[RMDB]
RNA sequence: GGGAACGACUCGAGUAGAGUCGAAAAGCCGAAGAGUUCGCUCUUCGGCGACGAUUUUGGCGUAGAUGAGAGUCUACAGUACUAGCCAUCCCAGAUGUACAAAUAAGCAUUGCUUCGGCAAUGCUAAAGUGGAAAUCGGAUUCGUCCGAUUUCCACUAAAAGAAACAACAACAACAAC
Reactivity to 2A3 in 0.01 (KOAc 150mM, MgCl2 10mM, bicine 150mM(pH8.5), 24C), signal-to-noise 1, nucleotides 027 to 126: g000c010c000g000a000a010g030a000g040u090u130c170g030c120u000c000u000u000c000g000g090c000g000a000c010g110a080u160u160u090u070g010g000c050g010u020a000g000a040u030g020a000g000a010g100u000c000u020a000c010a050g020u010a020c040u030a030g000c020c000a060u000c000c000c010a040g030a150u110g020u020a020c020a030a080a050u240a170a000g000c000a000u000u020g000c000u010u140c160g070g010c010a000a000u000g010c010u000a040a020
Reactivity to DMS in 0.01 (KOAc 150mM, MgCl2 10mM, bicine 150mM(pH8.5), 24C), signal-to-noise 1, nucleotides 027 to 126: g020c000c000g010a000a000g020a010g050u000u040c270g060c010u000c000u000u000c000g040g010c000g000a010c130g000a150u030u000u000u000g000g000c010g020u000a000g010a020u000g000a270g000a190g000u000c000u000a000c020a150g000u010a020c030u000a260g010c000c000a050u000c000c000c000a140g000a070u010g000u000a020c010a160a090a060u010a120a050g010c000a000u000u000g000c010u010u010c110g020g030c020a000a000u000g000c000u000a010a020
Chemical mapping of a 177-nucleotide RNA with 2A3 and DMS. For DMS the reverse transcriptase was MarathonRT. The 2A3 profile rests on 1,369 reads. The DMS profile rests on 1,003 reads. For 2A3 the reverse transcriptase was SuperScript II with manganese.